[RMDB]
RNA sequence: GGGAACGACUCGAGUAGAGUCGAAAACUGCUGGGCAGCCUGUUUCAGAUUCUAUUCAUGCCAACGACAAGUGCCGCGGAGCAGGAACUGCAGCACGUGGACGAGCUCUACAAGGCCUCCGAUGCGAGGGGCUAAAUUUAUUCGUAAAUUUAGCCCCAAAAGAAACAACAACAACAAC
Reactivity to DMS in 0.01 (KOAc 150mM, MgCl2 10mM, bicine 150mM(pH8.5), 24C), signal-to-noise 2, nucleotides 027 to 126: c050u000g000c030u000g000g020g030c050a030g000c010c000u010g020u000u000u030c050a230g020a060u010u010c080u030a180u000u000c040a120u020g020c110c070a130a120c160g000a100c060a040a090g040u000g020c050c090g010c070g020g000a060g010c020a020g000g010a090a090c030u010g000c000a000g010c010a030c150g000u000g000g020a300c030g030a040g060c000u000c010u010a040c060a050a150g020g010c000c010u000c000c030g000a120u020g040c160g000a130
Reactivity to 2A3 in 0.01 (KOAc 150mM, MgCl2 10mM, bicine 150mM(pH8.5), 24C), signal-to-noise 1, nucleotides 027 to 126: c000u020g000c010u020g040g060g090c000a010g000c000c010u010g040u080u060u000c030a060g020a140u110u090c040u110a230u100u170c100a070u170g100c010c020a060a040c050g140a060c060a170a080g050u080g100c050c020g050c160g030g000a000g000c010a020g000g000a070a020c020u010g000c000a000g000c000a010c180g020u020g000g020a010c000g020a030g170c000u000c010u000a030c000a040a000g020g020c000c010u080c000c000g030a060u160g070c060g000a080
Structure probing data (DMS and 2A3) for a 177-nucleotide construct. 2A3 adducts were read by reverse transcription with SuperScript II with manganese. The RNA was probed in 150 mM KOAc, 10 mM MgCl2 and 150 mM bicine (pH 8.5) at 24 C.